[RMDB]
RNA sequence: GGGAACGACUCGAGUAGAGUCGAAAAUCAACCUAAAUAACGGCUUCAGUCCUUAUAUUGUAUCAGGGAAAGAACUGUUUAUGUAUAACGUUUUACGUAAUCAUCCGGACGUAUUGUUACCAGGUGCCCCCAGAUAUACUUUCGAGUAUAUCUGGGGAAAAGAAACAACAACAACAAC
Reactivity to 2A3 in 0.01 (KOAc 150mM, MgCl2 10mM, bicine 150mM(pH8.5), 24C), signal-to-noise 5, nucleotides 027 to 126: u110c020a010a060c000c010u090a070a070a040u080a030a010c010g020g020c100u040u020c020a040g030u010c010c000u070u040a080u030a050u140u300g180u110a060u100c080a010g010g010g050a050a080a080g040a040a070c010u020g060u070u090u040a090u070g120u020a070u030a150a040c030g020u040u030u110u210a020c000g010u010a020a080u040c020a040u020c030c020g040g020a000c010g060u070a080u090u210g050u030u020a060c020c030a020g000g010u050g050c030
Reactivity to DMS in 0.01 (KOAc 150mM, MgCl2 10mM, bicine 150mM(pH8.5), 24C), signal-to-noise 5, nucleotides 027 to 126: u020c130a130a130c020c020u000a070a100a050u010a020a040c040g010g010c190u000u000c040a060g010u000c000c010u000u000a080u000a110u010u020g020u010a120u000c210a040g010g010g000a060a060a070g010a020a050c010u000g010u010u000u000a040u010g010u010a120u000a050a060c090g010u010u010u000u020a040c020g010u000a050a050u000c080a080u010c100c090g000g010a050c030g010u000a040u000u010g000u000u000a080c090c130a040g010g000u000g000c210
The data come from the RNA Mapping Database (RMDB), library OK2TRN.
This 177-nucleotide RNA was probed chemically with 2A3 and DMS.
The RNA was probed in 150 mM KOAc, 10 mM MgCl2 and 150 mM bicine (pH 8.5) at 24 C.
For 2A3 the reverse transcriptase was SuperScript II with manganese.
The 2A3 profile rests on 5,371 reads.
The DMS profile rests on 5,150 reads.